[RMDB]
RNA sequence: GGGAACGACUCGAGUAGAGUCGAAAAUUCUUUAGCAUCCGUUUUGGAUGCACCUUGAGGAACAAGGUGGGUAAUUUUCGUUUUGAAGAUAUGCCACCGACUUAUAGAGCAGAGAGGCACCUAUGAGGUAACGAACAUGCUUCGGCAUGUUCGUUACAAAAGAAACAACAACAACAAC
Reactivity to 2A3 in 0.01 (KOAc 150mM, MgCl2 10mM, bicine 150mM(pH8.5), 24C), signal-to-noise 3, nucleotides 027 to 126: u020u000c010u010u100u110a020g000c000a010u000c000c070g180u090u060u090u290g030g000a000u010g030c000a040c000c000u000u070g030a020g010g080a130a180c090a140a130g050g020u040g020g000g050u190a060a120u010u030u040u010c280g110u240u060u110u300g020a010a000g010a020u040a020u280g050c000c000a000c000c000g020a000c010u000u020a080u060a080g060a030g010c080a000g040a010g010a030g110g010c000a040c030c000u020a050u130g070a030g040
Reactivity to DMS in 0.01 (KOAc 150mM, MgCl2 10mM, bicine 150mM(pH8.5), 24C), signal-to-noise 1, nucleotides 027 to 126: u020u000c020u000u010u020a070g010c010a020u000c000c010g040u030u010u000u100g020g020a000u000g020c010a070c120c100u000u000g010a070g000g000a130a080c150a140a060g000g060u010g000g010g000u030a010a010u000u000u000u010c020g030u000u000u030u030g000a040a010g010a010u000a030u020g000c020c010a000c000c000g020a090c140u010u000a070u000a100g000a110g000c140a120g000a100g000a030g000g020c090a050c050c010u000a040u000g000a020g060